[RMDB]
RNA sequence: GGGAACGACUCGAGUAGAGUCGAAAACUUAGUCUCUUCCUUAAAUCUCUCUCCAAAGAGUCCUCAGAGAAAAGCUCCUAGGUCACUGUGCAGGUAUUGGAAUGUCUUUUUAUAGCUGUGGACAAUGACAAUGCUAACGAUUCGUCGUUAGCAUUGUAAAAGAAACAACAACAACAAC
Reactivity to 2A3 in 0.01 (KOAc 150mM, MgCl2 10mM, bicine 150mM(pH8.5), 24C), signal-to-noise 2, nucleotides 027 to 126: c020u040u050a090g090u000c000u000c000u090u080c010c000u080u070a000a230a260u010c030u000c010u000c000u060c020c010a120a120a000g070a010g050u000c000c010u040c010a040g020a000g050a040a000a040a080g000c020u040c000c020u040a080g070g100u070c010a000c090u090g070u140g060c080a040g080g040u070a050u090u080g020g000a090a040u060g140u120c020u120u160u000u040u060a160u090a130g010c030u030g070u050g050g000a010c020a000a090u060g010
Reactivity to DMS in 0.01 (KOAc 150mM, MgCl2 10mM, bicine 150mM(pH8.5), 24C), signal-to-noise 3, nucleotides 027 to 126: c070u000u000a110g010u000c040u000c030u000u000c030c010u000u020a110a090a140u010c010u010c010u000c030u010c020c050a070a130a160g000a190g000u000c020c030u000c060a020g010a140g010a050a070a060a100g000c030u000c020c030u010a090g000g010u000c050a060c060u000g020u010g030c130a100g010g030u000a100u010u010g010g000a060a090u020g010u000c010u000u000u030u000u000a070u010a120g010c040u000g000u010g000g020a070c100a120a080u010g000